Overview:
Conditions: 150 mM KOAc, 10 mM MgCl2 and 150 mM bicine (pH 8.5), 24 C. This 177-nucleotide RNA was probed chemically with DMS and 2A3. It was measured as part of the RMDB libraries RFM100 and RFMREP. The 2A3 profile rests on 1,440 reads.
RNA sequence: GGGAACGACUCGAGUAGAGUCGAAAACAUUUGAAAUAAGCUAGUUAAGAAUAAAUCACUUCCCCCAUAGAAAUGUUCUUAACAGCUUAUUGCAAAUAAACACUCCUUUUAAGAUAGUUGUAGCACACAUUUACGGUGUUUUCGAACACCGUAAAUGAAAAGAAACAACAACAACAAC
Reactivity to DMS in 0.01 (KOAc 150mM, MgCl2 10mM, bicine 150mM(pH8.5), 24C), signal-to-noise 3, nucleotides 027 to 126: c210a060u020u020u000g000a020a030a000u010a020a000g000c000u000a090g020u010u020a000a020g000a010a000u000a020a050a300u000c010a170c190u010u030c030c030c010c010c010a080u030a050g020a030a060a250u000g010u000u000c000u000u000a000a000c000a030g020c000u010u000a000u000u010g000c040a040a020a000u000a020a110a060c150a080c150u020c020c020u000u030u040u010a090a080g030a110u020a020g020u000u000g000u000a080g010c090a130c300a050
Reactivity to 2A3 in 0.01 (KOAc 150mM, MgCl2 10mM, bicine 150mM(pH8.5), 24C), signal-to-noise 3, nucleotides 027 to 126: c030a000u000u030u000g010a000a000a000u000a000a000g000c000u110a020g020u020u000a010a000g010a010a020u040a040a080a090u120c020a040c100u090u090c000c000c000c000c010a100u050a140g010a010a020a050u100g000u000u010c000u000u000a000a000c000a010g010c000u000u010a000u010u010g010c000a000a000a000u030a010a070a000c110a020c070u070c020c020u030u150u080u230a200a140g070a200u180a090g010u020u020g020u080a030g070c040a020c010a000
As a SHAPE reagent, 2A3 marks flexible, mostly unpaired nucleotides at the ribose 2'-OH. For DMS the reverse transcriptase was MarathonRT.